[RMDB]
Chemical mapping of a 207-nucleotide RNA with 2A3. Reactivities are given for positions 27 through 156. Conditions: 150 mM KOAc, 10 mM MgCl2 and 150 mM bicine (pH 8.5), 24 C. 2A3 adducts were read by reverse transcription with SuperScript II with manganese.
RNA sequence: GGGAACGACUCGAGUAGAGUCGAAAAAAUCUCGUUAAAUACUUUCAAAACUUAUAGUUGCAAACGACGACAACUACGCUUUAGCGGCUUAAUUCCCGCUUUCGCUUACCUAGAUUUGUCUGUGGGUUUACCGUAAGCGACAUUAACACAGAAUCGCGGAGUAGUGAUUGUUCGCAAUCACUACUCCAAAAGAAACAACAACAACAAC
Reactivity to 2A3 in 0.01 (KOAc 150mM, MgCl2 10mM, bicine 150mM(pH8.5), 24C), signal-to-noise 1, nucleotides 027 to 156: a000a000u090c060u040c030g020u040u030a160a170a050u160a220c050u070u170u170c160a170a220a070a050c030u130u130a080u040a100g000u000u030g010c010a010a160a210c100g030a000c000g030a040c040a040a030c120u060a060c010g040c120u100u120u080a030g000c000g100g000c060u110u270a030a000u300u080c030c000c000g010c010u040u040u110c000g000c000u020u050a000c010c010u070a010g000a140u040u000u140g000u040c000u000g000u000g000g000g040u090u030u000a040c000c000g010u000a010a010g000c010g110a070c060a100u120u100a060a000c010a000c010a010g030a000a000u080c030g010c060